[RMDB]
RNA sequence: GGGAACGACUCGAGUAGAGUCGAAAAGAUAUGGAUCAACUGACGGAAUCGAUCCAGGGAGCUGUGGGUCGGAAACGACCCAUACAGCGCGAAACCUGAGUCGAUUCCGUCAGUUGAUCCUAAGUCACACCCUCAUAUAGUUCGCUAUAUGAGGGUGAAAAGAAACAACAACAACAAC
Reactivity to DMS in 0.01 (KOAc 150mM, MgCl2 10mM, bicine 150mM(pH8.5), 24C), signal-to-noise 2, nucleotides 027 to 126: g000a060u000a300u020g000g010a000u000c000a010a000c010u010g010a020c010g000g010a020a010u000c000g020a010u000c030c000a010g020g000g010a210g010c020u000g030u000g000g010g010u010c010g010g000a100a050a290c030g020a010c010c010c000a050u000a040c020a020g040c000g020c210g020a080a070a230c010c000u000g000a030g000u000c000g010a020u000u000c000c000g000u000c000a000g010u000u010g010a000u000c010c000u000a000a080g010u000c020a280
The record gives the reactivity of an RNA of 177 nucleotides to DMS. The data come from the RNA Mapping Database (RMDB), library TTRINS. The RNA was probed in 150 mM KOAc, 10 mM MgCl2 and 150 mM bicine (pH 8.5) at 24 C.